RNA sequence: GGGAACGACUCGAGUAGAGUCGAAAAUUGCUGUGAUGUUACCUACUUUGAAAAUAAACUCUGGUUUGAUUUUGUUGAAAAUCCCAGUGUUAUUGGUGUUUAUCAUAAACUUGGAGAACGUGUACGCUAAGUUUCGUCUUCGGACGAAACAAAAGAAACAACAACAACAAC
Reactivity to 2A3 in 0.01 (KOAc 150mM, MgCl2 10mM, bicine 150mM(pH8.5), 24C), signal-to-noise 3, nucleotides 027 to 129: u120u100g040c050u020g010u050g060a030u000g050u030u020a030c000c000u000a040c000u080u140u200g190a070a090a030a040u200a090a060a050c010u020c000u040g000g070u000u140u000g070a060u000u000u100u000g150u040u130g100a000a010a030a040u000c000c020c000a010g000u040g090u010u010a100u040u030g080g010u030g080u060u140u050a120u080c000a020u070a040a100a100c060u040u130g080g030a050g000a090a010c000g030u030g030u070a010c020g010c070u000a160a000
Reactivity to DMS in 0.01 (KOAc 150mM, MgCl2 10mM, bicine 150mM(pH8.5), 24C), signal-to-noise 4, nucleotides 027 to 129: u110u030g020c040u040g050u020g040a000u000g010u060u010a090c050c020u000a130c070u030u030u010g030a110a170a090a070u070a040a110a130c010u020c080u060g010g000u050u070u050g030a070u000u000u020u040g020u000u100g060a070a030a080a110u020c050c010c010a110g010u010g020u070u000a080u000u030g030g020u010g030u010u010u030a080u040c120a050u020a030a100a060c110u020u050g000g010a100g010a000a080c130g040u060g010u040a070c090g020c000u050a100a130